[RMDB]
RNA sequence: GGGAACGACUCGAGUAGAGUCGAAAACAAAAACGGAUUGUGUCUGUAAUCACAACAAACAAAAACAAAAGGAUUGUGUCCAUAAUCACAAAAACAAAACAAAAUGGAUUGUGUCCGUAAUCACAAACGAUCCCUCAUACUUCGGUAUGAGGGAUCGAAAAGAAACAACAACAACAAC
Reactivity to 2A3 in 0.01 (KOAc 150mM, MgCl2 10mM, bicine 150mM(pH8.5), 24C), signal-to-noise 2, nucleotides 027 to 126: c030a090a010a040a030a000c020g160g040a170u000u060g000u020g060u040c040u110g070u210a130a090u080c000a000c000a050a020c030a080a060a050c130a000a170a030a000a000c050a000a150a000a000g100g020a100u030u000g030u010g000u020c010c010a020u070a030a090u040c000a000c030a140a240a020a000a030c010a060a090a060a000c130a010a190a000a000u090g010g000a010u000u060g070u000g000u000c000c000g010u040a020a020u010c000a000c110a110a120a000
Reactivity to DMS in 0.01 (KOAc 150mM, MgCl2 10mM, bicine 150mM(pH8.5), 24C), signal-to-noise 1, nucleotides 027 to 126: c170a090a170a180a040a080c060g000g000a010u060u000g000u000g000u120c040u060g020u000a020a190u000c270a000c190a000a000c290a000a000a080c080a000a050a000a150a300c300a080a040a090a270g000g130a000u000u000g000u000g000u000c000c000a000u000a150a060u000c000a100c080a000a000a280a280a240c300a000a000a000a130c170a000a000a170a020u000g000g130a040u080u000g000u000g000u000c070c020g020u000a010a010u000c000a000c230a000a020a180
Chemical mapping of a 177-nucleotide RNA with 2A3 and DMS. Source: RMDB library OK1LIB, as collected in RNAgym. For DMS, 597 sequencing reads were counted. Conditions: 150 mM KOAc, 10 mM MgCl2 and 150 mM bicine (pH 8.5), 24 C. DMS adducts were read by reverse transcription with MarathonRT.